[RMDB]
An RNA of 177 nucleotides, treated with DMS and read out base by base. For DMS, 2,301 sequencing reads were counted. It was measured as part of the RMDB library OK2TST.

RNA sequence: GGGAACGACUCGAGUAGAGUCGAAAACGGGGCGGCUGGCCGGGCGGGGGGCCGACCCCCCCACCUCCCUCCCGGACUGGGCGGCUGGCCGGGCAGAGGGGCUCCUCACUUCCCAGUAGGGGCGGCCCUGAAGAUAACAUUUCGAUGUUAUCUUCAGAAAAGAAACAACAACAACAAC
Reactivity to DMS in 0.01 (KOAc 150mM, MgCl2 10mM, bicine 150mM(pH8.5), 24C), signal-to-noise 1, nucleotides 027 to 126: c110g000g010g020g030c060g010g010c020u000g010g020c010c010g000g000g020c120g000g010g010g000g000g000c090c060g000a220c020c000c000c000c000c000c010a150c010c010u000c030c000c000u000c010c000c000g010g010a060c060u000g020g020g030c030g000g020c020u000g020g010c010c030g010g000g010c160a080g010a090g010g000g000g000c030u000c010c020u000c190a110c050u010u000c020c010c010a170g000u010a060g010g000g010g000c080g010g000c020c050